[RMDB]
RNA sequence: GGGAACGACUCGAGUAGAGUCGAAAACGGCAAAAAAGCAAACUUGACCACCAAAGAUAAAAGAGAUCUUAUCCAAGGAUGCAAAAGAUAAUCUCACUUUUGACACCCACUGAUCUCGAACUUAAAGAAAACCGAGACUACUUCGGUAGUCUCGGAAGAUUGGAACCUUGUUCGCAAGGUUCCAAUCAAAAGAAACAACAACAACAAC
Reactivity to 2A3 in 0.01 (KOAc 150mM, MgCl2 10mM, bicine 150mM(pH8.5), 24C), signal-to-noise 2, nucleotides 027 to 156: c010g030g020c010a010a030a000a010a010a110g120c050a110a050a060c010u090u080g060a130c010c000a020c000c020a100a000a080g050a110u140a080a070a060a000g010a000g020a010u010c020u060u150a050u070c100c050a070a070g020g020a030u030g020c000a000a000a000a000g000a100u130a110a130u170c070u030c110a020c010u010u000u030u000g050a040c000a000c030c010c000a030c080u020g000a000u000c010u000c000g000a030a010c020u130u240a040a060a080g050a070a110a010a010c000c010g000a000g000a010c000u010a000c000u020u030c060g060g000u010a000g000u000c000u000c000g000g000a000a000

Conditions: 150 mM KOAc, 10 mM MgCl2 and 150 mM bicine (pH 8.5), 24 C. An RNA of 207 nucleotides, treated with 2A3 and read out base by base. 2A3 adducts were read by reverse transcription with SuperScript II with manganese. The data come from the RNA Mapping Database (RMDB), library M2RFPK.